Chemical mapping of a 177-nucleotide RNA with 2A3. For 2A3, 906 sequencing reads were counted. Conditions: 150 mM KOAc, 10 mM MgCl2 and 150 mM bicine (pH 8.5), 24 C. It was measured as part of the RMDB library M2PK50. 2A3 adducts were read by reverse transcription with SuperScript II with manganese.

RNA sequence: GGGAACGACUCGAGUAGAGUCGAAAAGUACUACCGUUCGCGGUAGUACAAAUAAUCCAGGCUGGAAAGGCUGGAGCCAAAACUAUGGUAAAGGCACCAUAGAAAGAGCAGAGUUCGCUCUGCUCAACGGAGUUAAAAGCUUCGGCUUUUAACUCCGAAAAGAAACAACAACAACAAC
Reactivity to 2A3 in 0.01 (KOAc 150mM, MgCl2 10mM, bicine 150mM(pH8.5), 24C), signal-to-noise 1, nucleotides 027 to 126: g000u000a030c000u010a000c000c000g040u030u080c280g000c000g110g000u000a000g020u000a000c000a000a020a000u000a000a000u020c010c000a010g140g050c020u080g100g230a220a040a040g050g010c000u000g000g000a010g000c000c000a020a020a020a060c000u010a000u000g010g000u160a180a240a150g300g050c040a010c000c000a000u080a000g060a060a150a000g000a000g000c010a000g000a000g010u040u110c120g060c020u000c010u000g000c000u000c000a010a000